Chemical mapping of a 177-nucleotide RNA with DMS and 2A3. For DMS the reverse transcriptase was MarathonRT.
RNA sequence: GGGAACGACUCGAGUAGAGUCGAAAAAAGGCGAAAGAGUUCAUCAUGCAGAUGAUACAUGAUUUAUCUGGAACAUAUGACCCUAAUCCUGAGAAUGAAUUAAGAACCAUAAUAGAAUCAAAGGAAACACAGACGGGUGAUUCGUCACCCGUCUGUGAAAAGAAACAACAACAACAAC
Reactivity to DMS in 0.01 (KOAc 150mM, MgCl2 10mM, bicine 150mM(pH8.5), 24C), signal-to-noise 1, nucleotides 027 to 126: a030a110g000g000c000g000a300a000a010g000a000g020u000u000c160a060u000c020a000u000g010c270a020g000a230u020g000a080u000a270c110a290u040g050a080u040u000u000a000u000c000u000g000g000a300a050c040a020u000a020u060g000a120c160c030c000u000a160a120u000c000c000u000g000a300g000a090a270u000g000a080a040u000u000a000a090g010a140a000c120c300a020u030a060a000u000a140g000a020a190u000c020a000a270a000g000g000a280a080a000
Reactivity to 2A3 in 0.01 (KOAc 150mM, MgCl2 10mM, bicine 150mM(pH8.5), 24C), signal-to-noise 1, nucleotides 027 to 126: a000a000g000g240c090g040a010a000a000g060a050g000u210u200c000a000u020c000a000u260g000c000a000g100a110u000g060a100u220a000c000a000u000g010a090u140u030u040a160u140c000u180g070g120a050a000c000a000u210a020u300g000a120c000c000c140u250a140a140u070c000c000u000g000a000g040a050a110u080g010a000a000u120u100a040a000g140a190a060c000c000a000u080a190a060u000a030g110a100a130u140c060a130a050a050g000g000a030a030a030